[RMDB]
RNA sequence: GGGAACGACUCGAGUAGAGUCGAAAAUCUGCUGGCAUGAUUCCUGACCUUCCGAAAGAAGCAGUAGAGCCUACGGUCUCCACUGGUCUGGAAGCUCUGGGUCGUGGUCAGGACUUGGAGAAGCUGAGACCUCAAUAACAUUCGUGUUAUUGAGGUCAAAAGAAACAACAACAACAAC
Reactivity to DMS in 0.01 (KOAc 150mM, MgCl2 10mM, bicine 150mM(pH8.5), 24C), signal-to-noise 3, nucleotides 027 to 126: u010c000u010g000c000u000g000g020c050a060u000g000a040u000u030c010c000u000g000a050c160c000u000u020c030c020g010a100a080a030g010a080a070g000c010a000g040u000a080g000a000g000c030c030u000a180c280g040g010u030c010u000c000c070a030c010u000g000g010u010c030u000g000g020a060a050g020c170u010c030u000g000g000g000u000c010g000u000g010g010u020c000a010g000g010a020c170u020u020g000g000a160g010a090a140g010c060u030g000a300
Reactivity to 2A3 in 0.01 (KOAc 150mM, MgCl2 10mM, bicine 150mM(pH8.5), 24C), signal-to-noise 6, nucleotides 027 to 126: u040c050u090g020c000u000g020g040c020a030u030g000a090u300u170c000c010u020g000a010c000c010u070u080c030c020g100a150a140a110g070a110a010g150c020a000g000u040a010g000a000g000c010c000u170a150c250g070g010u060c010u010c020c010a020c020u040g010g140u050c020u020g020g000a030a010g000c020u010c030u020g000g030g000u030c010g040u070g030g050u040c010a000g000g030a010c020u020u090g060g030a150g030a180a000g020c060u030g040a020